[RMDB]
RNA sequence: GGGAACGACUCGAGUAGAGUCGAAAAUUGGCACUAAAGGUGCCAAGUCUAGAUCCACGUGUAGAUGCACAUCUACCGCCGGCAGGCUGUGUCUCUGUGUAUACAGAGACUCCGGCGGGGUGAGAUCUAGAGACCAGGCACUAUAGAUUGCCUACUACAGUAGCAAUUACUUCGGUGAUUGCUGCUGAAAAGAAACAACAACAACAAC
Reactivity to DMS in 0.01 (KOAc 150mM, MgCl2 10mM, bicine 150mM(pH8.5), 24C), signal-to-noise 3, nucleotides 027 to 156: u000u000g010g030c010a070c010u000a060a110a140g030g020u010g000c000c000a010a030g000u000c020u000a020g020a030u000c010c010a050c050g020u000g030u000a070g010a110u000g020c080a090c080a130u000c020u000a100c000c000g000c010c000g000g000c130a090g030g030c100u050g030u010g000u000c000u000c060u000g010u000g010u010a120u000a040c000a020g010a040g010a000c010u000c000c000g000g020c010g020g000g010g030u000g010a090g010a030u000c010u000a040g000a060g010a090c020c030a170g020g010c010a070c060u000a270u000a100g010a170u000u010g000c000c000u000a070c030u000a220
Reactivity to 2A3 in 0.01 (KOAc 150mM, MgCl2 10mM, bicine 150mM(pH8.5), 24C), signal-to-noise 3, nucleotides 027 to 156: u070u020g000g000c000a000c000u020a020a000a050g050g000u000g000c000c000a000a010g000u000c000u000a010g000a010u000c000c000a020c060g080u070g010u040a050g020a140u130g040c050a070c010a060u000c020u020a050c000c010g020c000c000g000g000c090a070g130g030c080u100g040u020g010u080c000u000c000u000g000u010g010u030a030u030a120c000a000g000a000g000a010c000u000c000c000g000g000c000g000g000g000g000u000g000a240g000a000u000c000u000a000g000a000g010a030c010c020a020g000g020c000a000c000u040a020u010a080g040a090u040u090g000c000c000u010a020c010u010a010